Structure probing data (2A3) for a 207-nucleotide construct. It was measured as part of the RMDB library ARCHII. For 2A3, 692 sequencing reads were counted. 2A3 adducts were read by reverse transcription with SuperScript II with manganese. Conditions: 150 mM KOAc, 10 mM MgCl2 and 150 mM bicine (pH 8.5), 24 C.
RNA sequence: GGGAACGACUCGAGUAGAGUCGAAAAAAGCGGCACAAAUGUAAUUGCCAACAACGAUUACGAAUACGCAAUGGCAGCCUAAUUAGGCUUGCCGCACUGAUUGGCUGACGUCAGAUACGCCGACCAGUGACAAACUUAUCCGACUGGCACCCAAAGCGCCAGUAUUCUGGUUCGCCAGAAUACUGGCAAAAGAAACAACAACAACAAC
Reactivity to 2A3 in 0.01 (KOAc 150mM, MgCl2 10mM, bicine 150mM(pH8.5), 24C), signal-to-noise 2, nucleotides 027 to 156: a000a000g060c070g000g000c050a070c080a110a110a090u240g000u020a010a000u020u070g000c060c050a030a070c060a040a000c050g030a000u040u010a010c030g020a080a040u110a050c050g060c060a020a090u080g050g000c010a000g000c000c000u150a300a300u140u300a030g000g000c000u040u140g020c000c000g020c000a010c000u000g000a010u010u020g020g000c020u010g060a030c020g040u030c000a000g000a090u130a100c120g000c000c000g000a010c000c010a060g000u040g060a090c070a010a150a020c030u090u050a050u120c030c010g030a040c030u010g000g020c000a000c030c030c000a020a050a000g110c070